[RMDB]
RNA sequence: GGGAACGACUCGAGUAGAGUCGAAAAGGUUCGAAGAGACCGCCGAGGCGAUGUACCUGACGUCCGGAUAUGUCUACGGCUCGGCGGCGGUUGCCGAGAAGUCGUUCGCUGGCGAGCUGGACCACUAGACGGCCUGGUGAUUCGUCACCAGGCCGUCAAAAGAAACAACAACAACAAC
Reactivity to 2A3 in 0.01 (KOAc 150mM, MgCl2 10mM, bicine 150mM(pH8.5), 24C), signal-to-noise 1, nucleotides 027 to 126: g050g020u090u150c070g080a210a010g020a110g030a240c000c000g000c050c000g050a070g000g100c030g060a170u120g010u190a070c020c060u060g070a030c110g030u000c040c000g030g000a070u010a050u300g080u000c000u020a020c000g000g000c000u000c020g040g000c060g000g000c000g020g020u170u140g060c000c000g120a120g070a070a000g010u000c000g070u010u100c070g010c050u090g010g130c000g000a000g000c000u090g000g030a010c010c010a040c020u060a040